[RMDB]
RNA sequence: GGGAACGACUCGAGUAGAGUCGAAAACAGCUGUCGUGAGACAGCUGAGUUAAGCUCUUCGGAGCUUAACACAUACGACGUGAGUCGUAUGAACCAUUAGCGUUCGCGCUAAUGGAACCGCUGUACUUCGGUACAGCGGACGACUGACGUGAGUCAGUCGAAAGACAUAUAUGCCUAUUGCCCCCUGUAGGAGUGCACUAGAUGUUGCGUGAAGAUAUUUCUUCAUUUGCCCUACCAAAAGGUAGGAUGCCCCUUUAAGGGAGGCUAGCAACGUGUUCGCACGUUGCAAAAGAAACAACAACAACAAC
Reactivity to 2A3 in 0.01 (KOAc 150mM, MgCl2 10mM, bicine 150mM(pH8.5), 24C), signal-to-noise 4, nucleotides 027 to 266: c000a010g000c010u010g000u010c020g020u040g120a130g000a050c010a000g000c000u000g000a000g000u000u000a000a000g000c000u010c000u020u100c290g100g000a000g000c000u000u010a000a000c000a000c000a000u020a010c010g000a000c010g090u120g090a060g020u010c000g000u010a000u010g020a020a020c000c010a000u000u000a000g010c010g030u060u030c230g040c010g000c110u000a000a000u000g000g000a030a000c000c000g000c000u000g000u000a010c010u030u070c260g100g000u000a000c000a000g000c000g000g000a010c010g000a000c000u000g000a000c000g090u100g050a030g020u010c000a000g000u000c010g010a040a030a000g120a020c130a010u290a010u060a060u250g130c070c030u210a260u190u270g010c000c010c000c000c020u000g020u030a000g000g030a080g010u200g010c020a020c040u090a050g070a300u210g130u290u160g060c000g000u000g010a000a010g010a010u040a220u300u270u030c000u000u000c000a020u060u030u190g040c010c000c000u010a010c000c010a080a270a190a180g000g000u000a000g020g000a010u040g000c000c000c010c010u010u010u110a040a000g020g010g040a080g010g000c010u010a000
Reactivity to DMS in 0.01 (KOAc 150mM, MgCl2 10mM, bicine 150mM(pH8.5), 24C), signal-to-noise 3, nucleotides 027 to 266: c010a010g020c010u000g000u000c000g000u020g010a300g000a010c010a010g030c010u000g000a060g010u000u000a010a010g020c000u000c000u000u030c170g020g010a010g010c020u000u010a000a010c000a300c000a000u000a010c010g010a020c000g010u020g000a150g030u010c000g000u000a000u000g000a270a190c000c000a020u000u000a000g000c010g030u000u020c250g020c010g000c000u000a000a010u000g000g010a110a160c000c010g010c010u020g010u000a010c000u000u020c170g020g020u000a000c000a000g000c020g020g010a060c030g000a030c020u000g000a030c010g010u020g000a150g010u000c000a010g000u000c000g010a060a100a050g000a070c210a080u000a120u010a050u010g010c020c050u000a090u010u010g000c020c030c030c010c050u000g000u000a030g000g000a040g030u010g030c020a030c090u010a070g000a100u010g000u010u000g010c010g010u000g000a000a010g020a090u020a110u010u010u010c000u000u000c000a020u000u030u010g010c090c000c000u010a000c000c000a100a100a110a130g010g010u000a030g000g000a130u010g000c040c030c000c000u000u010u010a140a060g020g000g000a060g010g010c000u000a070
About this RNA: The data come from the RNA Mapping Database (RMDB), library POS240. This 307-nucleotide RNA was probed chemically with 2A3 and DMS. Values cover nucleotides 27 to 266. For 2A3 the reverse transcriptase was SuperScript II with manganese. As a SHAPE reagent, 2A3 marks flexible, mostly unpaired nucleotides at the ribose 2'-OH. Conditions: 150 mM KOAc, 10 mM MgCl2 and 150 mM bicine (pH 8.5), 24 C.